[RMDB]
RNA sequence: GGGAACGACUCGAGUAGAGUCGAAAAGAAAGAAAGAAGCGAGCUGGCGCAGCCGCACGGGCAACCGUCAAUCCAGCACUUCACAAGUCUUGUCGGUCUGACAGGACAUCCAUCAACCCACCGGGAAAAAAGGACUACAGCUUCGGCUGUAGUCCAACAACAUAAUUGUGUUCGCACAAUUAUGUUGAAAAGAAACAACAACAACAAC
Reactivity to 2A3 in 0.01 (KOAc 150mM, MgCl2 10mM, bicine 150mM(pH8.5), 24C), signal-to-noise 4, nucleotides 027 to 156: g040a010a050a000g060a020a110a010g020a030a010g010c090g070a010g010c030u000g040g010c090g020c110a040g100c090c090g070c050a020c020g020g020g000c050a090a060c030c010g020u060c020a000a030u030c000c000a000g030c030a040c020u050u050c030a040c050a220a050g000u010c000u000u020g010u010c010g080g280u120c240u280g010a010c000a010g000g000a000c000a010u000c000c020a030u080c040a040a110c010c000c020a030c050c090g000g000g080a010a090a020a050a050a090g020g000a040c000u000a000c000a010g020c020u030u150c230g110g000c000u000g000u000a010g000u000c000c000a000a000
Reactivity to DMS in 0.01 (KOAc 150mM, MgCl2 10mM, bicine 150mM(pH8.5), 24C), signal-to-noise 1, nucleotides 027 to 156: g030a100a120a200g050a220a190a300g000a010a000g050c020g000a190g060c040u000g050g000c110g000c090a260g100c040c110g000c130a080c100g040g010g010c130a090a060c080c000g020u010c050a090a140u030c050c000a070g040c030a150c000u000u000c030a100c120a110a230g000u000c010u000u000g020u010c010g010g000u000c100u020g010a050c020a040g000g000a000c020a030u000c000c030a110u010c030a100a130c010c000c000a030c030c060g000g000g020a000a020a030a120a140a200g050g020a010c000u000a000c000a000g000c010u000u000c300g050g040c000u000g020u000a010g030u000c010c000a010a020
Structure probing data (2A3 and DMS) for a 207-nucleotide construct.
The DMS profile rests on 1,534 reads.
DMS adducts were read by reverse transcription with MarathonRT.
The RNA was probed in 150 mM KOAc, 10 mM MgCl2 and 150 mM bicine (pH 8.5) at 24 C.